[RMDB]
An RNA of 177 nucleotides, treated with DMS and 2A3 and read out base by base.
RNA sequence: GGGAACGACUCGAGUAGAGUCGAAAAGGGCUGGCUUGGGCCUCUUGCCCAUUUCUGAACCAAUACCUGUGUCUAUGAGGCUAUGAUGUUCUAAUUGGCCAAGUCUGGAUCAUAUGCCCAGAUGUGCGAAACAAGCAGCAUUCGUGCUGCUUGUUUCAAAAGAAACAACAACAACAAC
Reactivity to DMS in 0.01 (KOAc 150mM, MgCl2 10mM, bicine 150mM(pH8.5), 24C), signal-to-noise 2, nucleotides 027 to 126: g030g000g020c030u010g010g010c000u010u010g000g000g030c030c230u010c100u010u010g030c050c020c010a130u010u000u000c140u010g000a070a040c060c120a120a130u000a100c090c040u000g020u020g020u000c130u000a050u010g010a080g000g000c110u010a040u010g010a100u000g010u010u000c010u020a090a140u010u010g010g000c040c020a040a060g010u010c030u010g030g000a090u000c070a050u010a050u000g010c070c010c000a060g030a060u010g010u010g000c230
Reactivity to 2A3 in 0.01 (KOAc 150mM, MgCl2 10mM, bicine 150mM(pH8.5), 24C), signal-to-noise 2, nucleotides 027 to 126: g000g010g020c030u020g000g000c010u050u090g060g000g100c030c000u040c050u090u190g050c010c020c010a020u070u110u050c130u060g100a040a030c020c020a010a010u160a160c010c050u160g030u050g100u230c030u060a080u260g060a070g030g000c020u000a040u080g030a020u120g020u110u000c030u080a170a020u160u170g000g000c040c000a000a000g010u000c040u010g000g000a050u030c030a060u060a020u260g050c010c020c010a080g000a140u140g060u080g070c060
Conditions: 150 mM KOAc, 10 mM MgCl2 and 150 mM bicine (pH 8.5), 24 C. It was measured as part of the RMDB library OK2TST. For DMS, 1,556 sequencing reads were counted. Values cover nucleotides 27 to 126. For 2A3 the reverse transcriptase was SuperScript II with manganese.